[RMDB]
RNA sequence: GGGAACGACUCGAGUAGAGUCGAAAAGAUAUGGAUCGUGGACAUGAGCGUGUAUCGGAAACGAUACAGCUCAACAGCCCGAUCCUAAGUCAAAACCGUUGGCCAGAGUUCGCUCUGGCCAACGGAACCAACAUUACUUGUUCGCAAGUAAUGUUGGAAAAGAAACAACAACAACAAC
Reactivity to 2A3 in 0.01 (KOAc 150mM, MgCl2 10mM, bicine 150mM(pH8.5), 24C), signal-to-noise 4, nucleotides 027 to 126: g030a020u060a040u120g000g000a000u010c030g100u300g040g010a060c110a300u090g010a010g000c300g160u150g000u040a010u000c000g020g000a080a040a020c000g000a000u000a000c020a010g000c010u000c000a000a010c020a010g030c000c000c000g000a000u000c000c000u010a090a010g040u010c030a020a010a100a190c000c000g000u010u000g020g000c000c000a000g000a010g040u140u150c300g090c150u010c000u000g000g040c000c000a000a000c000g010g000a000a000
Reactivity to DMS in 0.01 (KOAc 150mM, MgCl2 10mM, bicine 150mM(pH8.5), 24C), signal-to-noise 4, nucleotides 027 to 126: g000a040u000a300u010g000g000a020u010c010g020u030g030g000a040c050a250u010g000a000g010c010g030u010g020u010a000u000c000g000g000a100a070a180c010g020a010u000a000c000a080g010c010u000c000a020a030c240a220g000c000c000c000g000a010u000c000c000u000a010a060g000u010c020a090a070a090a150c000c000g010u000u000g000g000c000c000a000g000a020g010u000u000c260g000c020u000c000u010g000g010c020c000a010a000c010g000g000a020a040